[RMDB]
RNA sequence: GGGAACGACUCGAGUAGAGUCGAAAACGCCCUGUUCGCAGGGCGAAAAAAGAUAUGGACUCCAUAGGCUUUUGACGAAUAGUGGGUCGGAAACGACCCAUGGGUUCGAUAAGCCUCAUGGAGUCCUAAGUCAAAAAGAGAGACUUCGGUCUCUCAACAACGUAUUGGGUUUCGACCCAAUACGUUGAAAAGAAACAACAACAACAAC
Reactivity to DMS in 0.01 (KOAc 150mM, MgCl2 10mM, bicine 150mM(pH8.5), 24C), signal-to-noise 1, nucleotides 027 to 156: c020g000c010c000c000u020g000u000u010c300g040c000a000g010g010g180c010g000a010a050a030a000a050a030g010a110u000a300u000g000g030a000c020u050c000c010a040u010a060g020g010c000u000u010u020u020g050a270c110g000a010a010u000a300g030u000g000g010g040u000c000g040g000a100a210a300c000g000a020c020c010c000a010u000g010g020g040u000u000c000g010a150u000a030a020g020c010c000u000c060a040u000g000g000a000g000u000c000c000u000a000a110g000u000c070a030a080a120a210a040g000a010g010a040g000a020c000u000u000c270g070g010u000c020u000c000u000c000a030a140

Structure probing data (DMS) for a 207-nucleotide construct. The reactions ran in a buffer of 150 mM KOAc, 10 mM MgCl2 and 150 mM bicine (pH 8.5), at 24 C.